[RMDB]
RNA sequence: GGGAACGACUCGAGUAGAGUCGAAAACCAAUGGGAAACCAUUGGCAACUCGGAAACGAGUUGAACCGGUAAUUACGCCAAAAUCCGGCGACAAUGCGAUUUUAAGCAUUGUCGAUUACGCCCAUGUCGAUUUUAAGACAUGGAGCGAAUUGGCGAAGGUUGGAGGUCCGUUCGCGGACUUUCAACCAAAAGAAACAACAACAACAAC
Reactivity to 2A3 in 0.01 (KOAc 150mM, MgCl2 10mM, bicine 150mM(pH8.5), 24C), signal-to-noise 7, nucleotides 027 to 156: c000c000a000a000u010g000g000g010a050a020a020c000c000a000u000u000g000g000c000a000a000c000u000c000g010g040a080a060a030c010g000a000g000u000u000g010a060a040c000c000g000g000u040a080a100u150u150a050c000g000c000c000a000a000a000a010u000c000c000g000g000c000g000a000c000a000a000u000g010c030g120a160u020u050u090u300a090a010g000c000a000u000u000g000u000c000g000a000u000u010a110c010g000c000c000c000a000u000g000u000c010g050a110u020u050u060u300a100a020g000a000c000a000u000g000g000a030g000c000g010a000a010u030u070g000g000c000g000a020a010
Reactivity to DMS in 0.01 (KOAc 150mM, MgCl2 10mM, bicine 150mM(pH8.5), 24C), signal-to-noise 4, nucleotides 027 to 156: c010c000a000a020u020g010g000g020a200a090a260c000c000a020u000u000g020g030c030a040a000c000u000c000g010g000a140a120a210c020g030a040g010u000u010g000a070a090c000c000g010g030u000a070a080u010u000a090c020g000c000c000a040a090a300a080u000c010c000g000g010c010g010a000c010a000a000u000g010c000g000a300u000u000u000u000a090a250g010c000a020u000u000g020u000c010g050a060u000u010a030c030g010c020c030c010a030u000g020u000c010g010a240u000u000u000u000a090a200g010a040c010a000u000g010g000a020g030c000g010a030a020u010u000g010g080c010g030a120a140